[RMDB]
RNA sequence: GGGAACGACUCGAGUAGAGUCGAAAACAAGGAAUUAUACCUAAAGGAACUGCAUUAACUCGAAGUGCUGCACAAAUAGGUGAUGAUAUUUAUGUUACAGGUAAUUUAGGUGAUAGUGCCGCAGGCCAUCGUGCAAUGGAUUCGUCCAUUGCACGAUAAAAGAAACAACAACAACAAC
Reactivity to DMS in 0.01 (KOAc 150mM, MgCl2 10mM, bicine 150mM(pH8.5), 24C), signal-to-noise 4, nucleotides 027 to 126: c080a090a150g010g000a090a030u010u000a070u000a030c020c010u000a020a000a050g010g030a130a190c040u000g000c210a070u000u000a060a040c030u040c140g000a100a060g040u010g010c070u010g020c080a050c070a050a110a090u010a040g000g010u000g000a080u020g000a100u000a030u010u010u010a050u030g000u000u020a070c030a010g020g020u020a090a120u010u010u010a010g000g020u000g010a030u000a020g010u000g020c010c020g030c120a050g000g000c080c040
Reactivity to 2A3 in 0.01 (KOAc 150mM, MgCl2 10mM, bicine 150mM(pH8.5), 24C), signal-to-noise 5, nucleotides 027 to 126: c100a100a010g020g020a030a020u080u020a030u040a070c000c000u050a050a030a000g090g000a110a130c000u010g030c030a140u080u090a050a060c070u050c130g080a150a040g090u110g080c040u090g010c080a050c030a090a140a100u240a130g050g030u040g040a040u070g040a040u010a080u190u160u080a080u150g050u050u060a020c010a020g030g020u120a100a050u030u030u030a020g010g000u050g040a030u020a030g080u060g050c000c010g020c030a010g070g050c000c000
Notes:
The record gives the reactivity of an RNA of 177 nucleotides to DMS and 2A3. The reactions ran in a buffer of 150 mM KOAc, 10 mM MgCl2 and 150 mM bicine (pH 8.5), at 24 C. Source: RMDB library OK1LIB, as collected in RNAgym. The DMS profile rests on 7,570 reads.